[RMDB]
RNA sequence: GGGAACGACUCGAGUAGAGUCGAAAAGUAGCAGCUGCUGGUGAGCGCAAGUUAAAUUGUCGUUCGCAGUUGUUUUAGUCGCUUUGGACUUUUGACCACGGAUGUACUGGCACUGGUGUUAAGAGCGGUACAUACACUUCUUCGGAAGUGUAUGUACAAAAGAAACAACAACAACAAC
Reactivity to DMS in 0.01 (KOAc 150mM, MgCl2 10mM, bicine 150mM(pH8.5), 24C), signal-to-noise 3, nucleotides 027 to 126: g000u000a080g000c020a020g010c020u000g010c020u010g040g030u010g010a030g010c030g000c010a010a010g010u000u020a070a110a130u000u000g020u010c010g030u000u010c000g020c010a040g020u000u000g010u000u000u010u000a080g010u000c040g010c090u000u010u000g000g010a040c010u000u000u000u000g010a100c020c020a060c080g010g000a090u000g010u010a070c120u000g010g010c010a050c040u010g020g020u000g020u000u010a070a090g000a110g010c080g000
Reactivity to 2A3 in 0.01 (KOAc 150mM, MgCl2 10mM, bicine 150mM(pH8.5), 24C), signal-to-noise 3, nucleotides 027 to 126: g070u050a000g010c000a000g000c000u050g000c010u140g110g260u180g060a010g000c020g000c020a010a010g000u090u160a080a130a160u050u040g130u230c030g000u000u000c030g000c020a010g000u010u020g030u040u040u000u060a030g000u030c080g000c090u060u050u080g030g020a060c010u100u070u010u130g030a040c000c020a030c050g070g000a060u070g010u120a060c050u030g040g000c010a000c040u020g000g000u020g040u110u070a090a020g030a010g060c040g040
The record gives the reactivity of an RNA of 177 nucleotides to DMS and 2A3. For 2A3, 2,649 sequencing reads were counted.